[RMDB]
An RNA of 177 nucleotides, treated with DMS and read out base by base. Values cover nucleotides 27 to 126. The reactions ran in a buffer of 150 mM KOAc, 10 mM MgCl2 and 150 mM bicine (pH 8.5), at 24 C. Reactivities are rounded to 0.1 and cut off at 0 and 3. It was measured as part of the RMDB library TTRDES.
RNA sequence: GGGAACGACUCGAGUAGAGUCGAAAAGAUAUGGACGCAUGCAGGGAGAAGUAGCUCGGAAACGAGCUAUACUUCAUCGAUCUGUUUGCGUCCUAAGUCAAAACAAACCUUCUUCGGAAGGUUUGAAGUGAUUAUCGAACUUCGGUUCGAUAAUCACAAAAGAAACAACAACAACAAC
Reactivity to DMS in 0.01 (KOAc 150mM, MgCl2 10mM, bicine 150mM(pH8.5), 24C), signal-to-noise 1, nucleotides 027 to 126: g000a010u000a240u030g000g000a030c030g010c000a000u010g000c020a040g050g020g010a060g000a080a020g000u000a010g000c000u000c000g020g000a040a020a050c000g010a010g000c000u000a030u000a070c010u000u000c010a240u010c200g000a010u000c010u000g000u000u000u000g010c040g000u000c000c000u020a030a030g000u000c030a130a170a140a300c030a020a010a000c000c000u010u010c010u000u010c300g030g000a000a010g010g010u000u000u000g010a040a090